[RMDB]
RNA sequence: GGGAACGACUCGAGUAGAGUCGAAAAGCGAUCUGGCUGCGACAUCUGUCACCCCAUUGAUCGCCAGGGUUGAUUCGGCUGAUCUGGCUGGCUAGGCGGGUGUCCCCUUCCUCCCUCACCGCUCCAUCUCAUUGUUUAUGUUCGCAUAAACAAUGAGAAAAGAAACAACAACAACAAC
Reactivity to 2A3 in 0.01 (KOAc 150mM, MgCl2 10mM, bicine 150mM(pH8.5), 24C), signal-to-noise 5, nucleotides 027 to 126: g030c030g030a150u090c060u170g120g000c050u060g020c070g010a010c010a050u020c040u070g040u010c010a210c010c010c010c010a030u020u180g020a020u030c020g000c000c020a070g020g050g100u170u170g110a170u190u090c030g020g030c050u120g010a040u010c010u030g040g040c080u090g040g000c050u080a100g030g000c030g000g020g000u010g010u020c000c000c000c010u030u050c000c000u050c000c000c010u030c010a070c010c020g010c030u010c020c000a060u010
Reactivity to DMS in 0.01 (KOAc 150mM, MgCl2 10mM, bicine 150mM(pH8.5), 24C), signal-to-noise 2, nucleotides 027 to 126: g020c040g020a080u010c090u010g010g010c050u010g010c100g000a020c040a080u010c070u010g000u000c020a200c040c190c010c020a070u010u010g010a040u000c050g010c010c020a090g020g010g010u010u000g000a150u010u010c070g030g000c010u030g010a060u000c010u010g010g010c050u010g020g000c150u000a120g010g000c010g000g000g010u000g000u010c000c010c020c030u000u000c020c010u010c020c000c010u010c030a060c080c040g020c040u000c050c040a150u000

The record gives the reactivity of an RNA of 177 nucleotides to 2A3 and DMS. Conditions: 150 mM KOAc, 10 mM MgCl2 and 150 mM bicine (pH 8.5), 24 C. For 2A3, 6,656 sequencing reads were counted. Source: RMDB library RFMREP, as collected in RNAgym.